[RMDB]
RNA sequence: GGGAACGACUCGAGUAGAGUCGAAAACAUAGGGCUAUUCGUAGCCCUAUGAAAAACCGUAGGACGACGUAGCUAGCCUCAACAUUCGAAAGAGUGUUGUAGGCUUGGACCUACGCCGUCCUAAACGGAAAAAGGAUCCGGAUUCGUCCGGAUCCAACAACUUUGUAAAGUUCGCUUUACAAAGUUGAAAAGAAACAACAACAACAAC
Reactivity to 2A3 in 0.01 (KOAc 150mM, MgCl2 10mM, bicine 150mM(pH8.5), 24C), signal-to-noise 1, nucleotides 027 to 156: c010a010u000a010g010g000g000c000u020a020u080u090c250g090u060a020g000c010c010c000u000a000u000g000a000a000a000a000a000c010c010g010u010a000g010g000a000c010g000a000c000g010u010a010g020c010u010a000g000c000c000u000c000a000a000c000a000u010u000c010g050a100a070a050g010a040g000u020g000u020u010g050u040a010g000g000c000u000u010g000g030a000c000c000u000a000c000g000c000c000g000u010c000c000u000a000a000a010c010g000g050a070a020a070a090a030g020g000a000u020c020c000g000g010a020u050u090c160g070u010c100c000g000g000a000u010c000c000a000a000
Reactivity to DMS in 0.01 (KOAc 150mM, MgCl2 10mM, bicine 150mM(pH8.5), 24C), signal-to-noise 2, nucleotides 027 to 156: c030a020u000a010g000g010g030c000u000a060u010u010c270g050u000a020g000c010c000c000u000a000u000g000a020a070a060a050a110c020c000g020u000a040g030g010a020c000g030a000c010g020u000a000g020c030u000a030g010c000c000u000c000a000a000c000a020u000u000c000g010a200a150a300g000a040g010u000g020u000u020g020u010a000g060g010c000u000u010g050g000a050c300c000u000a000c020g040c010c000g040u000c000c010u000a000a010a090c010g010g000a030a070a090a200a130g010g010a030u000c010c020g000g010a100u000u000c280g000u000c000c020g010g000a000u010c000c000a000a060
Overview
Chemical mapping of a 207-nucleotide RNA with 2A3 and DMS. DMS adducts were read by reverse transcription with MarathonRT. Reactivities are rounded to 0.1 and cut off at 0 and 3. For DMS, 5,945 sequencing reads were counted. High 2A3 reactivity points to a flexible backbone, as in loops and unpaired stretches. The RNA was probed in 150 mM KOAc, 10 mM MgCl2 and 150 mM bicine (pH 8.5) at 24 C.